[RMDB]
The record gives the reactivity of an RNA of 177 nucleotides to 2A3.
As a SHAPE reagent, 2A3 marks flexible, mostly unpaired nucleotides at the ribose 2'-OH.
It was measured as part of the RMDB library OK1LIB.
Reactivities are rounded to 0.1 and cut off at 0 and 3.
Reactivities are given for positions 27 through 126.
The RNA was probed in 150 mM KOAc, 10 mM MgCl2 and 150 mM bicine (pH 8.5) at 24 C.
RNA sequence: GGGAACGACUCGAGUAGAGUCGAAAACAACUUGUCACUUGUGGAAACCACGAUUAGCGCGCUAAAGCAGAUCUCAGCUGGAAACUCGCAGGUGAUGGCCUCUCCAAUACUUCAGAGUCACCUAGAGGACGAGUGCUGUGUUCGCACAGCACUCGUCAAAAGAAACAACAACAACAAC
Reactivity to 2A3 in 0.01 (KOAc 150mM, MgCl2 10mM, bicine 150mM(pH8.5), 24C), signal-to-noise 1, nucleotides 027 to 126: c100a010a130c080u120u070g080u030c000a000c000u000u000g000u000g130g000a080a050a050c030c000a000c020g140a260u070u280a130g010c070g000c050g000c130u270a300a010a060g080c190a030g040a040u030c100u000c000a070g000c020u000g000g000a000a120a120c000u050c010g020c000a000g000g100u000g000a000u000g090g010c010c000u000c000u050c050c050a090a090u020a140c020u100u020c000a010g000a000g070u000c000a050c030c070u050a010g000a040g090